RNA sequence: GGGAACGACUCGAGUAGAGUCGAAAAUUGGCGUGUUCGACGGCCCGUCCGAUGAGCAAUUGCAUGUGCGUGACAGCGAAAACGCCACCUAUCUGCGCAAUCCCGUCGCGCAAUGGUCGUUCGAGGACAAAAUAAAAUGGUUCGCCAUUUUAUUUUGAAAAGAAACAACAACAACAAC
Reactivity to DMS in 0.01 (KOAc 150mM, MgCl2 10mM, bicine 150mM(pH8.5), 24C), signal-to-noise 9, nucleotides 027 to 126: u010u010g010g020c020g020u000g000u000u010c020g010a090c060g010g010c030c040c060g020u000c070c030g010a110u010g000a090g010c100a160a090u010u010g000c080a050u000g020u010g010c030g020u000g000a030c020a080g010c060g010a020a040a070a040c020g000c010c070a080c240c080u000a060u010c120u000g000c020g010c020a170a150u000c010c010c020g000u010c070g010c010g000c020a040a040u000g000g010u000c050g010u000u000c020g010a180g000g000a190
Reactivity to 2A3 in 0.01 (KOAc 150mM, MgCl2 10mM, bicine 150mM(pH8.5), 24C), signal-to-noise 9, nucleotides 027 to 126: u070u050g030g000c020g000u040g070u030u060c020g070a100c040g080g020c020c020c010g020u070c020c020g070a100u100g060a120g120c100a140a290u180u180g050c020a040u100g040u060g120c020g050u080g020a030c030a040g040c020g050a030a010a010a020c010g020c010c000a020c000c010u100a130u060c100u070g000c020g000c020a030a080u040c010c010c030g080u140c040g010c000g000c000a020a040u070g020g010u030c030g030u050u060c040g050a070g040g040a030
The record gives the reactivity of an RNA of 177 nucleotides to DMS and 2A3. 2A3 adducts were read by reverse transcription with SuperScript II with manganese. For 2A3, 21,925 sequencing reads were counted. For DMS the reverse transcriptase was MarathonRT.